[RMDB]
RNA sequence: GGGAACGACUCGAGUAGAGUCGAAAACAACACGUCCUCGUCGUACAGAGUGGUAACAUGUGUCACCACAUAUCCAAGCUUGGGUACACCGGCUUGACCCAACCCCUUGGGCGGAUGGUGGCACAUGAAAAGAAGUAACACUUCGGUGUUACUUCAACCGUCAGAAUUACUUCGGUAAUUCUGACGGAAAAGAAACAACAACAACAAC
Reactivity to DMS in 0.01 (KOAc 150mM, MgCl2 10mM, bicine 150mM(pH8.5), 24C), signal-to-noise 1, nucleotides 027 to 156: c050a170a100c080a120c170g000u020c020c000u000c020g000u000c110g020u010a160c090a200g020a110g020u000g060g000u000a040a160c060a020u000g010u000g000u010c000a000c000c000a020c030a150u010a040u000c020c020a050a050g020c110u010u000g030g020g020u000a050c090a100c040c060g010g020c030u000u010g010a040c030c030c000a040a040c050c080c040c040u000u000g010g020g020c110g010g030a070u000g010g010u000g020g000c010a000c000a010u000g000a010a080a120a230g000a000a020g020u000a000a010c010a010c010u010u000c270g050g030u000g000u000u010a000c000u000u000c000a030a060
Reactivity to 2A3 in 0.01 (KOAc 150mM, MgCl2 10mM, bicine 150mM(pH8.5), 24C), signal-to-noise 3, nucleotides 027 to 156: c060a020a020c020a020c100g090u070c000c010u020c030g170u030c030g060u160a110c100a120g050a020g020u120g080g100u130a070a040c000a010u000g000u010g000u000c000a000c020c010a030c010a030u150a020u090c010c000a010a010g020c040u040u040g000g000g040u100a120c060a060c090c050g150g000c100u110u170g020a050c000c010c000a000a010c020c020c010c020u000u000g000g010g000c030g080g040a160u030g000g010u000g000g000c000a000c000a000u000g000a000a000a000a010g000a000a000g000u000a010a000c000a000c000u050u060c180g100g000u010g000u000u000a000c000u000u000c000a000a000

Chemical mapping of a 207-nucleotide RNA with DMS and 2A3.
2A3 adducts were read by reverse transcription with SuperScript II with manganese.